[RMDB]
RNA sequence: GGGAACGACUCGAGUAGAGUCGAAAAAAUCGCCCGCGAGUGGCGUGCCACCUACCUCCGGCGUGACUACGACCUCGGGGACGUCUACACGGCCAUGGCGGUGUCUUGCCGCGAGCUCGUGGACCGCUCCAUGCUACCAAUUCGUUGGUAGCAUGGAAAAAGAAACAACAACAACAAC
Reactivity to DMS in 0.01 (KOAc 150mM, MgCl2 10mM, bicine 150mM(pH8.5), 24C), signal-to-noise 3, nucleotides 027 to 126: a060a050u040c110g020c020c000c020g000c100g000a140g030u000g000g010c020g000u010g020c020c040a070c060c040u030a130c180c050u000c040c040g010g010c040g020u020g000a090c050u000a190c050g020a050c080c020u010c090g000g010g000g000a100c070g000u000c100u020a160c090a070c000g000g020c030c080a140u020g030g010c240g000g000u000g000u010c030u020u020g000c040c000g000c040g000a140g010c060u020c150g000u000g000g000a100c030c020g020c110
Reactivity to 2A3 in 0.01 (KOAc 150mM, MgCl2 10mM, bicine 150mM(pH8.5), 24C), signal-to-noise 6, nucleotides 027 to 126: a000a010u150c060g030c000c000c000g060c070g030a080g020u160g020g030c020g010u030g030c010c010a030c010c030u090a060c000c010u070c030c010g000g000c020g020u060g020a050c050u070a050c060g100a140c000c010u080c080g070g020g040g030a070c010g000u000c030u080a090c040a010c070g080g010c020c030a070u090g050g000c020g040g010u040g030u100c100u060u250g000c000c000g030c020g030a020g000c030u060c030g010u010g010g040a050c040c030g020c010
Chemical mapping of a 177-nucleotide RNA with DMS and 2A3. For DMS, 4,855 sequencing reads were counted. For 2A3 the reverse transcriptase was SuperScript II with manganese.